Conditions: 150 mM KOAc, 10 mM MgCl2 and 150 mM bicine (pH 8.5), 24 C. This 207-nucleotide RNA was probed chemically with DMS and 2A3. For DMS the reverse transcriptase was MarathonRT. The 2A3 profile rests on 2,975 reads.

[RMDB]
RNA sequence: GGGAACGACUCGAGUAGAGUCGAAAAAAAAGAUUUCUGAGACAAACACGCUUCACAAUGUGCGGCAAAGAAACAUUGUUUAUGCAAAGGCACUUCGCUAUGUGUGCUCAAACAUUGCUUAUUCAAAAAAAGAUUUUAGACUUCGGUCUAAAAUCAACAACAUUAUAAGGUUCGCCUUAUAAUGUUGAAAAGAAACAACAACAACAAC
Reactivity to DMS in 0.01 (KOAc 150mM, MgCl2 10mM, bicine 150mM(pH8.5), 24C), signal-to-noise 2, nucleotides 027 to 156: a050a120a090a100g000a130u000u000u000c020u000g020a230g010a160c090a120a150a140c070a020c030g000c010u000u020c060a060c080a030a010u010g090u000g080c050g040g000c010a090a040a080g020a050a000a000c030a050u000u000g020u000u010u000a080u010g010c030a060a150a100g010g000c000a020c030u010u000c090g010c110u000a080u000g020u000g030u010g030c010u000c030a080a170a060c040a030u010u000g010c000u000u020a130u000u000c010a010a000a100a150a090a150a280g000a050u000u000u000u000a010g010a030c000u000u000c300g070g010u000c000u000a000a010a010a030u000c000a040a100
Reactivity to 2A3 in 0.01 (KOAc 150mM, MgCl2 10mM, bicine 150mM(pH8.5), 24C), signal-to-noise 4, nucleotides 027 to 156: a000a000a000a000g140a040u150u180u050c100u150g080a070g040a110c090a060a220a040c080a010c020g000c000u010u010c000a000c000a010a020u010g000u000g000c010g030g060c080a140a120a100g100a020a040a000c000a000u000u000g020u030u080u080a080u080g000c020a040a030a080g040g000c020a010c030u110u140c130g040c120u120a100u160g060u000g010u010g010c020u050c060a110a140a050c050a080u040u020g000c000u120u110a120u210u240c140a130a090a000a010a000a010a020g000a000u010u000u010u000a000g000a000c000u020u020c180g050g020u010c010u000a000a000a000a000u000c000a000a010
It was measured as part of the RMDB library M2RFPK.